[RMDB]
Background
An RNA of 177 nucleotides, treated with DMS and read out base by base.
RNA sequence: GGGAACGACUCGAGUAGAGUCGAAAAGACAGUUAAACCAUACCGUUUAGCAAUUUGAGUGGCUAUACUGCCUACACCACCGGCACCAUUAAUGAUUAACACGGAUUUACCUACAUUUUCAGAAGGAUACAAAAUAACCCUUCGGGGUUAUUUUGUAAAAAGAAACAACAACAACAAC
Reactivity to DMS in 0.01 (KOAc 150mM, MgCl2 10mM, bicine 150mM(pH8.5), 24C), signal-to-noise 1, nucleotides 027 to 126: g010a070c070a050g000u010u000a130a130a140c040c020a060u000a110c080c090g040u000u000u000a070g000c080a030a100u000u000u000g030a140g020u000g020g020c030u000a150u010a060c030u000g000c000c020u030a070c180a070c040c010a020c030c070g000g010c020a080c080c040a040u010u020a010a020u010g010a100u010u010a050a090c040a070c230g000g010a170u010u000u000a080c030c000u000a070c120a080u000u000u020u030c080a120g000a170a050g030g020a200